[RMDB]
Conditions: 150 mM KOAc, 10 mM MgCl2 and 150 mM bicine (pH 8.5), 24 C.
An RNA of 177 nucleotides, treated with DMS and 2A3 and read out base by base.
The data come from the RNA Mapping Database (RMDB), library TTRDEL.
RNA sequence: GGGAACGACUCGAGUAGAGUCGAAAAGAUAUGGAUCGCUAGGCAAGGCGCUCGGAAACGAGACGCUGAUGACCCUACGAUCCUAAGUCAAAACCAUUGCAGGCGGGUUCGCCCGCCUGCAAUGGAACUACUAGUACAUCUUCGGAUGUACUAGUAGAAAAGAAACAACAACAACAAC
Reactivity to DMS in 0.01 (KOAc 150mM, MgCl2 10mM, bicine 150mM(pH8.5), 24C), signal-to-noise 4, nucleotides 027 to 126: g010a040u000a300u020g000g000a010u000c000g010c300u000a040g010g010c030a090a180g000g010c000g010c000u010c000g020g000a090a070a160c000g010a020g000a090c010g020c000u000g010a090u010g010a180c300c010c010u000a010c000g010a000u000c000c000u000a020a070g000u000c020a080a070a130a180c000c010a000u000u000g000c000a000g000g000c000g000g010g010u010u040c260g000c040c010c000g020c000c000u000g020c000a000a000u010g000g000a010a070
Reactivity to 2A3 in 0.01 (KOAc 150mM, MgCl2 10mM, bicine 150mM(pH8.5), 24C), signal-to-noise 2, nucleotides 027 to 126: g020a010u090a040u170g010g010a000u000c020g020c240u020a000g000g010c030a070a100g000g000c020g000c010u010c000g010g020a090a040a030c010g000a010g180a070c010g000c010u010g020a100u120g020a030c000c000c000u000a000c010g000a010u000c000c000u010a120a010g040u030c030a000a010a110a190c000c000a000u010u000g030c020a010g020g000c020g080g050g010u110u230c270g120c050c000c040g000c000c000u000g010c010a000a010u000g000g000a000a000